[RMDB]
RNA sequence: GGGAACGACUCGAGUAGAGUCGAAAAUAGAUCAUCCUUUUAGAGAUCAUGUCUUAAACAAUACAUGGCCGACUCCCAAACAGAUAGAGGACUUUGGAGACAAAUGGCAUUUGUUGCCUCUAGUGAACGAGCCUAAUUAAUUCGUUAAUUAGGCUCGAAAAGAAACAACAACAACAAC
Reactivity to DMS in 0.01 (KOAc 150mM, MgCl2 10mM, bicine 150mM(pH8.5), 24C), signal-to-noise 8, nucleotides 027 to 126: u030a080g000a120u040c070a060u010c030c020u010u010u030u010a100g010a160g010a040u000c010a030u000g000u000c070u010u010a050a090a090c160a090a070u020a040c040a040u000g000g020c040c010g010a110c120u000c000c000c010a090a060a100c130a080g000a120u020a010g000a030g000g000a090c100u010u030u010g010g000a180g000a040c030a020a020a050u020g020g010c080a300u010u000u010g010u010u000g000c020c010u000c010u000a040g010u020g000a110a130
Reactivity to 2A3 in 0.01 (KOAc 150mM, MgCl2 10mM, bicine 150mM(pH8.5), 24C), signal-to-noise 9, nucleotides 027 to 126: u150a010g090a040u040c020a040u060c040c030u070u130u050u100a130g030a010g000a080u060c020a030u040g030u000c040u050u180a160a100a050c080a100a070u110a050c020a060u030g060g000c010c000g030a040c000u010c000c010c000a010a050a060c070a020g110a050u070a010g020a020g020g010a020c020u090u150u140g130g020a110g010a040c040a030a060a060u120g090g030c060a060u040u040u150g060u030u040g020c020c000u000c010u030a080g060u070g150a090a040